[RMDB]
RNA sequence: GGGAACGACUCGAGUAGAGUCGAAAAACAAAUACGGUGCGAACGAUCCGGUGGAAAUAUACGGUUGGCGUUGGAGAAACCUCACCAUCCGCCAAAUGGCCGGGAAAGGAUAAGCAACUAUGAGUCACGCUCUACUUCUGCCACUGACACAGCCGCGAUGUUAGCGUCUUUUCGAAGACGCUAACAUAAAAGAAACAACAACAACAAC
Reactivity to DMS in 0.01 (KOAc 150mM, MgCl2 10mM, bicine 150mM(pH8.5), 24C), signal-to-noise 1, nucleotides 027 to 156: a130c000a100a080a100u000a060c020g040g000u000g010c080g010a110a210c020g010a080u000c050c020g060g040u000g020g000a070a190a150u040a120u000a020c000g030g020u010u000g040g040c020g000u020u000g050g020a160g070a180a140a210c000c010u000c010a050c020c000a050u000c010c010g090c020c050a070a150a060u010g000g040c000c000g000g050g000a050a110a140g000g010a130u000a000a120g000c020a050a120c020u030a030u000g030a160g000u000c030a200c060g000c020u010c000u000a090c070u010u020c020u010g000c000c020a030c000u020g000a130c040a020c030a080g020c030c050g100c070g010
Reactivity to 2A3 in 0.01 (KOAc 150mM, MgCl2 10mM, bicine 150mM(pH8.5), 24C), signal-to-noise 2, nucleotides 027 to 156: a010c050a010a070a010u140a080c020g040g020u030g030c000g080a100a030c060g020a070u020c030c000g000g000u030g050g110a110a160a020u190a040u050a050c030g020g000u030u000g020g000c060g010u030u020g050g000a060g140a170a140a030c000c020u030c000a020c010c000a000u010c060c020g000c000c000a000a060a110u120g020g010c020c020g010g000g000a040a240a000g050g010a070u080a120a000g010c070a010a060c010u100a060u220g030a020g070u030c050a010c180g050c020u050c010u070a040c000u040u020c020u060g050c000c020a030c030u000g030a030c010a000c010a070g060c030c030g060c040g060

Structure probing data (DMS and 2A3) for a 207-nucleotide construct. Conditions: 150 mM KOAc, 10 mM MgCl2 and 150 mM bicine (pH 8.5), 24 C.